Chemical mapping of a 177-nucleotide RNA with DMS and 2A3. The DMS profile rests on 3,631 reads. Values cover nucleotides 27 to 126.
[RMDB]
RNA sequence: GGGAACGACUCGAGUAGAGUCGAAAAGAUGGAUAUGCUAGCUACCGACUUGGCAGAUUACUUGGUCAGAAAGGGUGUUCCAUUCAGAGAGACUCAUCACAUAUCUGGUGAGUGUGUCGCUACUGCAUACCAUGGUAGCAUUCGUGCUACCAUGGUAAAAAGAAACAACAACAACAAC
Reactivity to DMS in 0.01 (KOAc 150mM, MgCl2 10mM, bicine 150mM(pH8.5), 24C), signal-to-noise 3, nucleotides 027 to 126: g000a070u000g010g010a070u000a040u000g020c000u000a070g010c010u000a160c100c030g000a080c050u020u010g000g000c050a090g010a120u000u010a060c090u000u000g020g010u000c070a050g010a080a100a050g000g000g020u000g000u000u000c040c020a130u000u000c060a050g010a120g010a100g000a030c000u000c010a030u000c030a030c110a070u000a040u000c120u000g010g000u010g010a030g020u000g020u010g010u000c040g000c080u000a070c090u000g010c170a120
Reactivity to 2A3 in 0.01 (KOAc 150mM, MgCl2 10mM, bicine 150mM(pH8.5), 24C), signal-to-noise 3, nucleotides 027 to 126: g080a050u090g040g000a060u030a020u150g050c030u040a060g030c030u040a030c000c030g050a040c070u030u030g030g000c020a010g010a080u050u000a110c050u050u120g060g000u070c020a010g110a100a120a050g050g000g000u030g020u080u010c010c000a030u020u110c060a010g070a010g030a020g010a130c000u020c040a020u050c010a030c040a050u160a030u090c070u070g140g000u000g000a030g000u010g040u050g020u000c020g020c090u110a130c050u110g080c010a020